[RMDB]
RNA sequence: GGGAACGACUCGAGUAGAGUCGAAAACGGCAUCACAUAAGAGAUGCAGCUCCUGACUUCUCCUCUGAUCUUCGUGAUCAGAGUUUUGAGUCGUCAGACUACGAGCAGUUUCUCUUAGUCGUUGCAUUAGAUACACCAAGUUCGCUUGGUGUAUCUAAAAAGAAACAACAACAACAAC
Reactivity to DMS in 0.01 (KOAc 150mM, MgCl2 10mM, bicine 150mM(pH8.5), 24C), signal-to-noise 2, nucleotides 027 to 126: c130g030g000c000a040u000c050a040c070a300u010a010a010g000a020g010a000u000g000c000a050g000c000u000c000c010u010g000a010c010u000u000c000u000c010c000u000c000u000g000a000u000c000u000u020c230g010u000g010a010u000c000a000g000a010g000u000u000u010u010g000a010g060u010c080g010u000c000a010g000a100c110u010a190c300g000a010g020c010a040g000u000u010u010c000u000c000u010u000a010g000u000c140g000u000u000g010c030a110u010
Reactivity to 2A3 in 0.01 (KOAc 150mM, MgCl2 10mM, bicine 150mM(pH8.5), 24C), signal-to-noise 2, nucleotides 027 to 126: c000g050g010c010a010u020c020a040c010a140u030a000a010g000a000g000a010u000g000c000a010g010c010u040c010c000u010g000a000c010u020u010c000u020c010c030u020c010u000g000a000u000c000u080u150c300g150u180g030a010u000c000a010g000a000g010u020u030u050u000g000a000g000u000c000g020u010c000a000g020a070c100u250a070c130g000a000g000c010a000g000u010u010u010c010u000c000u000u010a030g000u020c050g010u010u010g010c000a010u060